[RMDB]
RNA sequence: GGGAACGACUCGAGUAGAGUCGAAAACAUAAGAGAUUGGAUAGUCCGUAUUCUAUACCCAUCAUGUAACACACGAUACAAUAUUCCUUUCUAAAAUCUCGUAGGAUAAAGUAUAUACAAGUGUAGAUGAUAAAUUCUACAGAUGUUAAUAUAGAAGCAUCAUGCCAUAUUUCGAUAUGGCAUGAUGAAAAGAAACAACAACAACAAC
Reactivity to 2A3 in 0.01 (KOAc 150mM, MgCl2 10mM, bicine 150mM(pH8.5), 24C), signal-to-noise 5, nucleotides 027 to 156: c010a000u180a080a090g090a020g020a130u040u040g030g010a010u030a030g050u060c100c070g050u080a140u060u030c010u010a040u100a200c010c020c000a030u030c020a020u070g100u150a110a040c030a000c010a010c130g050a010u040a070c020a070a030u020a040u090u090c010c000u070u150u070c070u200a120a150a120a180u090c090u040c110g050u050a010g000g010a000u030a040a090a010g010u010a040u000a000u030a090c050a070a050g040u010g000u080a040g010a050u050g010a010u050a140a130a040u080u000c020u030a010c000a010g050a040u030g040u080u070a080a030u100a050u010a070g050a060a010g030
Reactivity to DMS in 0.01 (KOAc 150mM, MgCl2 10mM, bicine 150mM(pH8.5), 24C), signal-to-noise 3, nucleotides 027 to 156: c050a160u010a050a070g010a050g000a070u000u010g020g010a170u010a100g000u000c050c070g020u010a150u000u010c040u000a040u010a070c040c060c030a100u030c080a070u000g080u000a100a110c100a130c080a080c120g000a150u000a010c030a060a210u000a110u010u000c000c010u000u000u000c000u000a050a010a080a070u000c020u000c060g030u000a100g010g020a030u000a050a040a300g010u000a030u000a120u020a130c090a050a100g020u000g020u010a040g010a050u000g010a180u020a070a060a110u000u000c000u000a010c010a040g000a020u000g000u000u000a030a080u020a060u000a060g000a110a090g030
An RNA of 207 nucleotides, treated with 2A3 and DMS and read out base by base. The data come from the RNA Mapping Database (RMDB), library OK3TST. The reactions ran in a buffer of 150 mM KOAc, 10 mM MgCl2 and 150 mM bicine (pH 8.5), at 24 C. 2A3 adducts were read by reverse transcription with SuperScript II with manganese. 2A3 is a SHAPE reagent: it acylates the 2'-hydroxyl of flexible nucleotides of all four kinds. In probing experiments dimethyl sulfate is read out at A N1 and C N3, which are open when not base-paired.